[RMDB]
RNA sequence: GGGAACGACUCGAGUAGAGUCGAAAAGGUAGUUUCGACUACCACAUCCUAAGUCACAUGACAUGGACGGACUUAUGGAGUUGUGUCGGAAACGACACAACGUUGAAAUAAGUACGUCCAACAGCAUGUGAUAUGGAAUCACCCCCCUUCGGGGGGGCCUAUUUGUAGCCUUCGGGCUACAAAUAGGAAAAGAAACAACAACAACAAC
Reactivity to 2A3 in 0.01 (KOAc 150mM, MgCl2 10mM, bicine 150mM(pH8.5), 24C), signal-to-noise 1, nucleotides 027 to 156: g010g000u010a020g020u050u100u240c200g130a050c010u000a010c000c040a000c030a090u020c000c000u050a160a040g000u000c000a010c000a010u020g140a080c000a100u040g000g090a000c000g010g030a000c000u000u010a000u000g030g020a010g030u020u000g000u010g000u000c010g010g040a040a060a080c010g000a010c000a000c020a000a000c000g040u050u040g000a010a010a000u000a000a000g000u000a010c010g000u020c000c010a000a000c000a000g010c010a000u000g000u010g000a010u010a020u040g020g060a060a060u300c050a080c300c020c040c000c000c000u030u050c220g000g010g020g010g000g020g000